[RMDB]
RNA sequence: GGGAACGACUCGAGUAGAGUCGAAAACCACUGAAAAUGCUAAAAUUGCCCGCUACAUUUAUUCUUUUAUUGAAGAUGCCUAUGUUAUCGUGCCAGAAAUCAGGUAUCAUCAAAAGACGAACCUGCGCAAAAACCGCGUUUACACCGUCUAUGUUGAUAUCGUAGGGUAGUUCGCUACCCUACGAUAAAAAGAAACAACAACAACAAC
Reactivity to 2A3 in 0.01 (KOAc 150mM, MgCl2 10mM, bicine 150mM(pH8.5), 24C), signal-to-noise 1, nucleotides 027 to 156: c000c010a020c060u060g040a030a200a000a100u110g070c050u100a050a170a180a160u120u080g040c050c020c010g010c110u080a070c080a140u090u190u120a100u080u060c070u070u090u190u180a130u080u050g050a120a060g070a180u030g000c050c010u040a040u100g010u030u040a040u130c000g020u070g190c040c030a090g080a000a030a050u100c010a000g000g020u000a040u020c020a000u010c000a000a070a000a070g000a010c010g010a000a020c010c050u110g000c080g040c020a010a070a070a070a070c050c000g000c010g000u030u000u050a040c090a020c000c020g020u080c020u050a070u140g020u000u000g000a070
This 207-nucleotide RNA was probed chemically with 2A3. Conditions: 150 mM KOAc, 10 mM MgCl2 and 150 mM bicine (pH 8.5), 24 C. Source: RMDB library OK3TST, as collected in RNAgym. For 2A3, 384 sequencing reads were counted.